The record gives the reactivity of an RNA of 177 nucleotides to 2A3 and DMS.
The 2A3 profile rests on 5,641 reads.
For DMS the reverse transcriptase was MarathonRT.

RNA sequence: GGGAACGACUCGAGUAGAGUCGAAAAGAUAUGGAUGUCUGCAAGUCAUACUGCGAGAACUACGCUGGCUAUUCGGAAACGAAUAGACAGCGCUCGCAGUAUGAUGAUGACCAGACAUCCUAAGUCACGAAUAUACUUCCUUCGGGAAGUAUAUUCGAAAAGAAACAACAACAACAAC
Reactivity to 2A3 in 0.01 (KOAc 150mM, MgCl2 10mM, bicine 150mM(pH8.5), 24C), signal-to-noise 2, nucleotides 027 to 126: g020a010u050a060u230g000g010a000u000g000u010c000u010g000c010a100a300g020u000c000a000u000a020c010u000g000c050g090a020g010a100a080c270u300a060c300g000c000u020g010g000c010u010a000u010u000c030g000g000a020a110a080c010g010a000a000u010a000g000a000c000a000g000c000g000c010u000c000g000c000a000g000u010a000u000g000a000u000g000a010u000g010a000c000c010a000g000a010c010a010u000c000c000u000a140a040g050u010c030a010
Reactivity to DMS in 0.01 (KOAc 150mM, MgCl2 10mM, bicine 150mM(pH8.5), 24C), signal-to-noise 4, nucleotides 027 to 126: g000a030u000a300u010g000g000a000u000g010u000c000u000g000c030a090a100g010u000c000a010u000a010c000u000g000c000g010a020g000a150a050c180u030a300c020g030c000u000g020g020c010u010a000u000u000c010g020g000a160a080a240c000g010a010a000u000a000g000a010c000a000g000c000g030c010u000c000g010c010a010g000u000a000u000g010a010u000g000a060u010g000a130c300c010a010g000a000c000a010u000c010c000u000a010a040g010u000c060a280